[RMDB]
RNA sequence: GGGAACGACUCGAGUAGAGUCGAAAAUAUCAGAUCUCCCCGAAUAAGAUGCAUCGACUUUCUCUGCACAACUGCAUCAUUUACGGUGGCCGUUAGAUCACAUGACUUCGCUAUCUUGUGCUAGCUCCGCUGAAGAGAGUUUCGACUCUCUUCAGCGAAAAGAAACAACAACAACAAC
Reactivity to 2A3 in 0.01 (KOAc 150mM, MgCl2 10mM, bicine 150mM(pH8.5), 24C), signal-to-noise 2, nucleotides 027 to 126: u080a010u030c030a040g070a160u000c050u020c020c020c010c000g060a120a040u120a160a020g010a040u050g000c020a060u090c040g030a060c000u080u130u010c070u080c060u060g040c040a050c020a090a060c030u030g000c000a010u010c000a020u090u090u070a080c090g030g000u080g040g020c040c010g100u080u050a050g000a080u070c030a020c000a070u100g020a040c050u060u010c130g040c060u050a050u070c000u020u050g010u010g010c000u000a030g020c030u060c050
Reactivity to DMS in 0.01 (KOAc 150mM, MgCl2 10mM, bicine 150mM(pH8.5), 24C), signal-to-noise 2, nucleotides 027 to 126: u000a120u000c130a070g020a140u000c050u000c000c020c030c040g000a110a060u020a090a060g010a050u010g020c030a050u000c120g010a060c140u000u010u010c060u000c060u000g000c040a060c020a060a110c180u000g000c030a020u020c020a080u010u000u000a050c040g000g000u000g020g020c200c100g030u000u000a030g010a040u000c030a080c100a060u000g000a060c040u010u010c080g030c040u000a040u000c070u000u010g010u000g000c030u000a090g020c030u010c070